[RMDB]
RNA sequence: GGGAACGACUCGAGUAGAGUCGAAAAUUUCUAGACUGUCACAUAAACGAGCUCUAAACUCAGCAUGGAGCCCAUCUGUUUAUUUGAUUAACUGGCCUGCUGCUUAUGGGCCAGAUGAAAGCCAGUCUGAAUAAUGAGCUUGCAAUGUAAAGAAUGAAAGAUGCAGUAUGUUCGCAUACUGCAUCUUAAAAGAAACAACAACAACAAC
Reactivity to DMS in 0.01 (KOAc 150mM, MgCl2 10mM, bicine 150mM(pH8.5), 24C), signal-to-noise 1, nucleotides 027 to 156: u000u000u000c040u010a090g020a040c070u000g000u010c070a030c080a080u000a050a210a140c050g040a090g020c010u000c010u010a130a150a040c060u000c070a110g040c070a180u000g000g010a130g060c020c050c020a080u000c090u000g000u010u000u000a060u000u000u000g010a070u010u000a100a130c040u000g000g020c000c010u000g040c110u000g000c120u010u010a070u000g040g030g090c040c000a000g010a090u010g000a050a090a040g030c070c000a150g020u000c030u000g010a050a040u000a050a120u000g030a080g000c000u000u010g010c040a150a110u010g040u000a080a150a190g010a130a100u000g040a160
Reactivity to 2A3 in 0.01 (KOAc 150mM, MgCl2 10mM, bicine 150mM(pH8.5), 24C), signal-to-noise 1, nucleotides 027 to 156: u030u080u030c010u040a040g130a070c010u110g080u180c000a090c020a010u150a080a100a050c000g000a020g020c000u000c000u020a060a160a100c090u080c050a000g000c070a080u050g020g000a000g020c040c000c000a000u010c010u070g100u110u270u090a160u150u090u040g150a100u070u040a020a010c000u020g000g000c000c000u000g030c030u080g000c000u300u120a170u130g000g000g000c030c000a000g000a010u010g050a010a010a010g060c050c000a000g070u000c000u000g000a010a010u140a030a050u030g000a000g000c000u000u050g000c000a000a070u060g030u110a150a070a040g150a150a090u300g110a160